[RMDB]
RNA sequence: GGGAACGACUCGAGUAGAGUCGAAAAGAGGUCCGCGUUCCAUCCUUUCUUACCUGAUGGCCGGCAUGGUCCCAGCCUCCUCGCUGGCGCCGGCUGGGCAACAUUCCGAGGGGACCGUCCCUCGGUAGUUGUACAUUCAGUUCGCUGAAUGUACAACAAAAGAAACAACAACAACAAC
Reactivity to DMS in 0.01 (KOAc 150mM, MgCl2 10mM, bicine 150mM(pH8.5), 24C), signal-to-noise 3, nucleotides 027 to 126: g010a100g000g000u010c050c040g010c040g010u010u000c000c030a100u000c060c060u000u000u020c050u010u000a140c070c050u000g000a130u000g010g010c020c000g000g000c020a110u010g010g000u000c300c000c010a040g010c010c070u010c110c080u010c170g010c030u000g010g010c200g020c010c020g000g000c010u000g000g000g010c030a050a080c100a140u000u010c010c000g000a020g000g010g000g000a160c200c210g000u000c000c010c010u000c010g010g000u000a020
Reactivity to 2A3 in 0.01 (KOAc 150mM, MgCl2 10mM, bicine 150mM(pH8.5), 24C), signal-to-noise 3, nucleotides 027 to 126: g090a010g020g090u040c020c040g030c040g070u080u010c010c010a040u020c040c030u060u130u140c020u100u150a140c020c030u040g070a100u110g200g030c030c000g000g040c050a130u190g030g030u100c020c000c000a000g000c000c020u080c020c000u040c050g000c020u020g040g000c030g050c010c040g030g000c020u020g000g000g020c030a050a020c000a120u120u080c010c010g000a010g010g000g000g020a080c060c040g200u250c020c000c000u020c020g020g020u000a060